An RNA of 207 nucleotides, treated with DMS and 2A3 and read out base by base.
RNA sequence: GGGAACGACUCGAGUAGAGUCGAAAACAACAAAUGCGUGACGUACUGGGGACAUUUGAUACUGUCCAGAUAAUAAAGCUGCUACCAUUUGCAGCAGCCCCACCGAAGCAGAGCAGAAUGCAGUUUUCUUCUUUAACUGUGAAUGUGAGAGGCUCAGACCCUCUGAAUAGUUCGCUAUUCAGAGGGUAAAAGAAACAACAACAACAAC
Reactivity to DMS in 0.01 (KOAc 150mM, MgCl2 10mM, bicine 150mM(pH8.5), 24C), signal-to-noise 2, nucleotides 027 to 156: c050a080a070c060a070a080a030u000g030c060g030u010g030a090c020g030u000a080c000u020g070g000g000g000a080c050a060u000u000u020g010a100u000a080c060u000g000u000c030c010a160g010a120u000a110a140u000a050a130a140g010c010u010g030c020u010a020c040c160a140u000u000u000g010c000a040g060c010a030g000c020c040c010c060a120c050c040g040a100a160g000c070a070g020a150g050c010a120g010a050a170u010g020c000a030g000u000u000u010u000c070u000u000c040u000u000u010a040a060c000u140g030u010g020a140a050u000g020u000g020a110g010a110g010g020c000u000c070a070g000
Reactivity to 2A3 in 0.01 (KOAc 150mM, MgCl2 10mM, bicine 150mM(pH8.5), 24C), signal-to-noise 2, nucleotides 027 to 156: c090a000a020c020a010a060a010u100g040c020g070u070g090a090c060g010u070a090c060u080g000g010g020g010a010c040a050u110u070u130g110a120u140a100c050u020g010u020c060c000a050g030a060u220a090a050u100a080a080a020g000c000u000g010c000u050a080c090c090a220u110u050u210g020c010a020g000c020a010g010c000c000c020c000a010c020c020g000a000a010g050c040a010g030a020g050c010a000g020a080a010u080g000c000a000g030u010u000u070u040c020u090u040c020u050u180u100a040a030c000u030g020u040g080a070a020u090g020u010g030a050g030a040g060g010c020u040c040a020g060
High 2A3 reactivity points to a flexible backbone, as in loops and unpaired stretches.
2A3 adducts were read by reverse transcription with SuperScript II with manganese.
Reactivities are given for positions 27 through 156.